[RMDB]
RNA sequence: GGGAACGACUCGAGUAGAGUCGAAAACGUUCAGCCUUCGGGCUGAACGAAAAAAGAUAUGGACUCGUAUCGGAUCAUCGAUCAUACAUCGGAAACGAUGUAUGGGAGAUCCAUACCGAGUCCUAAGUCAAAAAACGUUCAACUUCGGUUGAACGAAGAUUUCUUUCUCGUUCGCGAGAAAGAAAUCAAAAGAAACAACAACAACAAC
Reactivity to 2A3 in 0.01 (KOAc 150mM, MgCl2 10mM, bicine 150mM(pH8.5), 24C), signal-to-noise 2, nucleotides 027 to 156: c000g000u000u000c000a000g000c050c000u110u160c300g130g010g000c000u000g000a000a000c000g020a000a000a000a000a000a000g020a010u050a020u020g000g000a010c010u040c010g030u040a060u120c280g000g060a010u010c060a050u300c030g020a050u020c000a000u000a000c000a000u010c010g000g000a090a140a030c050g000a000u000g010u000a000u000g000g000g000a020g000a000u000c000c000a040u050a080c110c170g020a000g010u010c000c000u000a000a000g000u010c000a000a000a060a000a110a110c050g000u010u000c000a010a030c020u030u060c300g140g000u000u000g000a000a000c000g000a030a010